[RMDB]
RNA sequence: GGGAACGACUCGAGUAGAGUCGAAAAGCUGAACAACGUUGCCACUUUUGGCACGCCCUCCUGCCUGCCCACGCUGAACCUGCUGCGCAAUGACCCCGGCCUCAUGGCGCGCGACGCGCAGAGGACGCACAAUCAACGCUUUCGAGCGUUGAUUGUGAAAAGAAACAACAACAACAAC
Reactivity to DMS in 0.01 (KOAc 150mM, MgCl2 10mM, bicine 150mM(pH8.5), 24C), signal-to-noise 4, nucleotides 027 to 126: g010c060u000g010a070a080c160a090a070c060g030u010u010g000c010c030a140c300u000u000u010u000g000g030c030a020c000g000c030c030c050u000c060c010u010g010c040c010u000g020c030c010c020a070c120g020c050u000g020a080a080c060c030u000g010c040u000g010c040g020c070a080a110u010g000a160c050c010c000c020g010g010c000c020u000c070a090u000g020g000c020g000c020g030c210g020a130c190g020c010g020c010a100g010a030g030g000a070c080g000
Reactivity to 2A3 in 0.01 (KOAc 150mM, MgCl2 10mM, bicine 150mM(pH8.5), 24C), signal-to-noise 3, nucleotides 027 to 126: g020c040u050g030a060a010c040a040a000c070g130u190u090g030c020c020a130c140u150u190u230u100g020g000c000a000c000g030c020c000c000u000c000c010u030g050c000c000u030g000c000c000c000a020c040g020c030u090g040a070a040c010c000u060g090c010u040g010c100g010c020a060a130u130g040a100c010c010c010c000g010g020c000c010u070c040a100u200g100g000c010g000c000g000c020g160a100c150g000c000g020c010a010g010a010g010g000a000c020g000